[RMDB]
RNA sequence: GGGAACGACUCGAGUAGAGUCGAAAAAGCGAGCUUGGGGUAGUGGGAGCUAAGUAGAACAAGGUAAGAAACUGGCGCUUUCUGUCGUAUUUUUAAAAACAAUGAAGUAAUAAAUUAGGGUGGAACCUUAUCGUCAUCUUUUCGAAGAUGACGAUAAAAAAGAAACAACAACAACAAC
Reactivity to DMS in 0.01 (KOAc 150mM, MgCl2 10mM, bicine 150mM(pH8.5), 24C), signal-to-noise 4, nucleotides 027 to 126: a100g010c080g020a080g010c070u000u000g000g010g010g000u020a040g030u000g030g010g000a080g000c050u020a030a110g030u020a040g020a070a090c080a080a050g010g010u010a070a070g000a070a100a050c050u010g000g010c100g000c090u000u000u000c040u010g000u000c070g020u010a010u000u010u020u010u070a040a070a120a050a050c100a070a050u020g000a100a040g010u000a080a060u040a050a040a080u010u010a040g000g000g010u000g000g010a090a130c120c040
Reactivity to 2A3 in 0.01 (KOAc 150mM, MgCl2 10mM, bicine 150mM(pH8.5), 24C), signal-to-noise 3, nucleotides 027 to 126: a000g050c020g000a000g010c000u040u040g000g010g000g040u080a070g040u100g040g030g030a000g050c020u080a080a050g030u080a020g060a090a000c070a080a010g050g010u090a090a110g030a130a080a000c020u050g030g000c060g020c000u050u050u020c010u050g000u000c040g030u010a180u000u080u020u070u090a120a130a020a030a000c040a040a030u110g050a010a020g080u150a000a110u090a160a060a020u090u110a010g000g000g070u040g010g010a000a020c000c000